Chemical mapping of a 207-nucleotide RNA with 2A3. The RNA was probed in 150 mM KOAc, 10 mM MgCl2 and 150 mM bicine (pH 8.5) at 24 C. It was measured as part of the RMDB library RSTRND.
[RMDB]
RNA sequence: GGGAACGACUCGAGUAGAGUCGAAAAGUAUUUGUCGUCCACAGGUGCUGCAACCGACCUAGCCGGGAGCCAUCCGUCGCGCACAUCACCACUGCUGGCUCCUUCGGGUACCACAGCCAAGCUCCUCGCCGAGGCCGUCUACAAGACUCAACGUUAGGGUUUAAGAAUCGUUCGCGAUUCUUAAACCAAAAGAAACAACAACAACAAC
Reactivity to 2A3 in 0.01 (KOAc 150mM, MgCl2 10mM, bicine 150mM(pH8.5), 24C), signal-to-noise 1, nucleotides 027 to 156: g050u030a080u100u130u120g080u020c010g030u000c010c030a030c030a060g030g040u100g000c000u020g030c010a010a120c070c030g070a040c000c000u050a020g070c070c050g020g020g010a000g010c030c010a030u010c000c030g030u070c050g010c020g000c050a010c000a180u150c030a050c030c020a020c060u060g040c020u020g010g000c000u000c000c000u060u050c030g030g000g000u020a040c010c020a030c040a050g030c010c010a030a000g000c010u080c000c000u050c000g060c040c010g010a070g030g020c000c010g000u000c020u090a030c020a070a000g000a040c020u010c100a040a030c070g030u070u100a060g050